[RMDB]
RNA sequence: GGGAACGACUCGAGUAGAGUCGAAAACACGUUUCGACGUGGAUGAACCGUAGGCGAACCACAGGAGGACAGGACUAUGGUACUUCGAAAGAGGUACCACGAAUCCUGUCUCCCCACCCUGUGGUCGCCUAAACGGACCUGCUGAGUUCGCUCAGAAUCAUCUGUGCACGUUCGCGUGCACAGAUGAAAAAGAAACAACAACAACAAC
Reactivity to 2A3 in 0.01 (KOAc 150mM, MgCl2 10mM, bicine 150mM(pH8.5), 24C), signal-to-noise 1, nucleotides 027 to 156: c020a000c020g040u040u100u210c260g180a040c000g070u010g020g030a070u120g120a070a110c050c020g010u010a010g010g000c030g020a230a110c000c000a000c000a000g010g000a000g000g000a010c000a000g030g000a020c090u000a010u030g000g000u000a000c010u020u000c010g030a020a040a050g000a010g000g000u000a000c010c010a010c000g000a020a300u010c000c000u000g000u000c000u020c030c010c000c010a040c000c000c000u000g000u000g000g000u000c010g000c000c000u010a000a000a000c000g000g030a050c030c030u050g060c020u000g010a010g000u040u090c130g100c160u000c000a010g110a070a090

Overview:
An RNA of 207 nucleotides, treated with 2A3 and read out base by base. For 2A3, 1,239 sequencing reads were counted.